RNA sequence: GGGAACGACUCGAGUAGAGUCGAAAAAGCUCCAUACGUGGAGCACACUUUGCCGGCUCAGGUACUUAGUGACUCUCAAUGCUUUCGACAUCUUGAGAGUCUCUCUGUGCCUGCACUGGCGGUGGAACAGACAAGAGGUUUUCGAACCUCUUGUCUGAAAAGAAACAACAACAACAAC
Reactivity to 2A3 in 0.01 (KOAc 150mM, MgCl2 10mM, bicine 150mM(pH8.5), 24C), signal-to-noise 7, nucleotides 027 to 126: a010g010c000u000c010c010a030u050a100c270g110u060g000g000a000g080c000a000c000a000c010u140u180u250g000c000c000g030g000c060u010c010a000g000g000u000a000c000u000u000a010g010u010g030a000c000u000c000u000c000a000a020u040g020c060u140u190u230c140g160a200c050a040u080c060u110u050g000a000g000a000g000u000c000u000c000u000c000u000g010u000g010c000c000u000g010c010a000c000u010g000g000c000g000g000u010g000g010a060a060
Reactivity to DMS in 0.01 (KOAc 150mM, MgCl2 10mM, bicine 150mM(pH8.5), 24C), signal-to-noise 2, nucleotides 027 to 126: a060g020c000u010c000c000a050u000a090c230g050u020g000g020a000g010c010a050c040a010c000u000u000u070g010c010c010g020g000c140u000c000a030g000g010u000a000c010u000u000a010g010u010g000a020c000u000c000u000c000a020a010u010g010c060u020u030u030c300g000a160c070a050u000c090u000u000g010a030g000a000g000u010c000u000c000u000c030u000g000u000g030c000c010u020g000c090a030c020u000g000g010c000g000g000u000g000g000a110a140